[RMDB]
RNA sequence: GGGAACGACUCGAGUAGAGUCGAAAAUCAGGGACUAUAUGCUAACUUAAGUUCUAGGGAGACGGAAUUUCGUUACGUCGCUCAUUUAUCAAUAUUAUCAUCCUCACUACAUUGGUAAAUAAGCGAACCUUCCUAGGAGGUUCGCCUCCUAGGAAGGAAAAGAAACAACAACAACAAC
Reactivity to 2A3 in 0.01 (KOAc 150mM, MgCl2 10mM, bicine 150mM(pH8.5), 24C), signal-to-noise 7, nucleotides 027 to 126: u080c010a030g040g000g030a020c050u050a050u040a030u300g070c030u040a060a140c020u130u100a090a020g030u040u020c040u070a040g030g030g050a060g010a020c020g040g100a100a130u080u140u150c040g050u080u100a070c090g040u010c000g000c000u000c010a010u000u010u010a000u000c000a010a010u030a070u160u190a090u140c060a080u060c010c070u100c040a080c080u170a050c020a100u010u000g000g010u000a000a010a010u020a010a000g000c010g000a020a030
Reactivity to DMS in 0.01 (KOAc 150mM, MgCl2 10mM, bicine 150mM(pH8.5), 24C), signal-to-noise 5, nucleotides 027 to 126: u000c070a120g000g010g000a050c070u010a110u000a060u010g010c080u010a060a080c120u000u000a090a070g010u010u000c030u000a110g010g010g010a080g020a060c040g000g020a070a080u000u000u000c130g010u000u000a090c180g010u000c000g010c000u000c020a010u000u000u000a000u000c000a010a010u000a060u000u000a100u000c090a070u000c040c020u000c060a090c180u010a070c170a030u000u000g000g010u000a010a010a020u000a030a010g010c000g000a020a170
About this RNA
Structure probing data (2A3 and DMS) for a 177-nucleotide construct. 2A3 adducts were read by reverse transcription with SuperScript II with manganese. For DMS the reverse transcriptase was MarathonRT. The 2A3 profile rests on 8,024 reads. DMS (dimethyl sulfate) methylates the pairing face of unpaired adenines and cytosines. The data come from the RNA Mapping Database (RMDB), library RFMREP. The RNA was probed in 150 mM KOAc, 10 mM MgCl2 and 150 mM bicine (pH 8.5) at 24 C.